About this RNA: The record gives the reactivity of an RNA of 177 nucleotides to 2A3. Values cover nucleotides 27 to 126. The reactions ran in a buffer of 150 mM KOAc, 10 mM MgCl2 and 150 mM bicine (pH 8.5), at 24 C. The 2A3 profile rests on 351 reads.
[RMDB]
RNA sequence: GGGAACGACUCGAGUAGAGUCGAAAAAUGCCGCAUUCAGCGACGGUGACUCUAGUGGGCGACUGUCUAUCUAGCGUUGACAUCUACAUACUAUAUAGUAAUACCAAUACUCAAGACUACGAAACGGACUGGGCCGUAAUUUCGAUUACGGCCCAGUAAAAGAAACAACAACAACAAC
Reactivity to 2A3 in 0.01 (KOAc 150mM, MgCl2 10mM, bicine 150mM(pH8.5), 24C), signal-to-noise 1, nucleotides 027 to 126: a000u000g000c000c000g000c050a000u000u020c010a030g060c000g000a000c000g080g030u000g000a050c050u000c020u130a100g030u070g000g030g000c080g030a170c120u020g030u000c020u050a050u000c000u000a000g040c000g130u000u000g100a100c000a290u000c000u130a130c000a080u050a090c000u150a000u240a200u110a300g220u300a010a010u030a300c000c100a000a000u000a130c000u020c050a000a000g170a240c000u050a000c000g040a000a000a000c000g010g020